[RMDB]
RNA sequence: GGGAACGACUCGAGUAGAGUCGAAAAGUGAACAAGCUAGUGGAGUUGACAGAAGAGAAAAUCGGUGACAAAAAUUUAUUAUUGUUCACCUUGACCUGAGGUCGUGUGAUGGUAUUAUUUAGAAGUGGAAUAGAUGCUAAUUCGUUAGCAUCUAUUCAAAAGAAACAACAACAACAAC
Reactivity to 2A3 in 0.01 (KOAc 150mM, MgCl2 10mM, bicine 150mM(pH8.5), 24C), signal-to-noise 7, nucleotides 027 to 126: g090u070g020a050a020c020a040a050g020c020u090a020g030u030g050g020a080g020u050u050g050a030c030a030g080a080a010g040a040g020a060a100a010a100u090c070g010g020u020g010a000c010a010a150a060a060a050u200u300u170a150u170u070a080u050u070g040u090u040c010a010c000c000u010u060g030a030c000c010u040g040a040g040g050u030c040g020u040g020u040g080a060u050g020g030u070a070u160u040a100u040u210u080a130g030a180a050g090u110g130
Reactivity to DMS in 0.01 (KOAc 150mM, MgCl2 10mM, bicine 150mM(pH8.5), 24C), signal-to-noise 9, nucleotides 027 to 126: g010u000g000a080a070c070a050a070g010c080u000a060g020u000g010g000a110g010u000u000g010a060c060a060g000a130a080g000a120g000a080a060a110a090u000c100g010g010u000g000a040c010a010a040a100a090a090u010u010u010a050u020u010a140u000u000g000u000u000c000a010c000c010u000u000g010a070c070c030u010g000a080g010g020u000c040g010u000g010u000g010a060u000g000g010u000a040u000u010a080u010u010u010a090g010a080a100g020u010g010